[RMDB]
RNA sequence: GGGAACGACUCGAGUAGAGUCGAAAAAUGAAGGAGGGAGCAGUGCGUGCUCUCCUUCCCAGUUUUUCCUGGGAAAGCAUUUCAGAAAGGUUUCAUUUAAGGAGAGGUUGGGGCGGCGCGGUGGCUCUCAACGUACUGUAUUCGUACAGUACGUUGAAAAAGAAACAACAACAACAAC
Reactivity to 2A3 in 0.01 (KOAc 150mM, MgCl2 10mM, bicine 150mM(pH8.5), 24C), signal-to-noise 3, nucleotides 027 to 126: a000u050g010a020a020g050g010a030g010g010g010a000g020c070a020g040u110g270c150g090u080g010c030u000c010u000c000c010u000u000c010c000c000a010g010u000u000u040u240u120c010c000u030g020g020g040a030a060a010g030c060a080u060u160u280c130a090g150a080a120a010g100g060u020u100u110c050a090u080u150u210a100a040g010g000a050g020a010g020g030u130u140g000g030g000g080c070g040g000c060g020c030g040g070u020g030g020c010u000c000
Reactivity to DMS in 0.01 (KOAc 150mM, MgCl2 10mM, bicine 150mM(pH8.5), 24C), signal-to-noise 6, nucleotides 027 to 126: a040u000g010a120a170g000g010a060g010g010g010a030g010c080a050g010u010g020c180g030u010g010c010u000c010u010c010c010u000u000c000c020c020a200g010u010u010u000u010u000c150c000u000g010g010g000a060a060a090g010c070a080u000u000u010c140a100g010a090a090a090g010g010u000u000u000c040a100u000u000u000a080a090g000g010a060g010a050g000g000u010u000g010g000g000g010c090g010g010c080g000c080g000g010u010g000g000c110u000c080
About this RNA:
Chemical mapping of a 177-nucleotide RNA with 2A3 and DMS. The data come from the RNA Mapping Database (RMDB), library OK2TRN. The 2A3 profile rests on 2,898 reads.